Background
The record gives the reactivity of an RNA of 177 nucleotides to DMS and 2A3. Values cover nucleotides 27 to 126. Source: RMDB library RFMREP, as collected in RNAgym. DMS adducts were read by reverse transcription with MarathonRT. The reactions ran in a buffer of 150 mM KOAc, 10 mM MgCl2 and 150 mM bicine (pH 8.5), at 24 C.
RNA sequence: GGGAACGACUCGAGUAGAGUCGAAAAAGGACCCGAAAGAUGGUGAACUAUGCCUGGAUAGGGUGAAGUCAGAGGAAACUCUGAUGGAAGCUCGUAGCGGUUCUGACGUGCAAAUCGAUCGUAGAAUUAUCAAUAACACCUUCGGGUGUUAUUGAUAAAAAGAAACAACAACAACAAC
Reactivity to DMS in 0.01 (KOAc 150mM, MgCl2 10mM, bicine 150mM(pH8.5), 24C), signal-to-noise 2, nucleotides 027 to 126: a080g010g000a080c010c010c000g000a060a090a190g020a080u010g020g030u000g010a090a070c110u000a080u020g000c030c020u000g060g010a190u010a110g010g000g000u000g020a260a290g020u000c000a020g000a020g010g000a070a110a150c000u000c010u000g010a020u000g000g010a170a150g000c010u000c000g000u000a130g040c080g010g000u000u010c030u010g000a070c050g010u000g010c060a010a060a090u000c040g000a110u000c060g010u000a120g010a130a070u000
Reactivity to 2A3 in 0.01 (KOAc 150mM, MgCl2 10mM, bicine 150mM(pH8.5), 24C), signal-to-noise 1, nucleotides 027 to 126: a000g050g020a020c000c000c000g020a050a000a030g040a020u110g030g060u070g030a070a040c060u120a090u260g050c020c000u040g050g000a100u120a220g040g070g040u170g050a020a020g000u000c000a010g000a020g040g000a060a080a060c000u000c010u000g010a000u000g010g010a030a060g000c000u000c040g040u020a000g060c060g000g050u000u060c050u100g020a000c010g010u010g030c030a040a040a040u010c020g090a080u010c020g060u050a050g140a110a110u060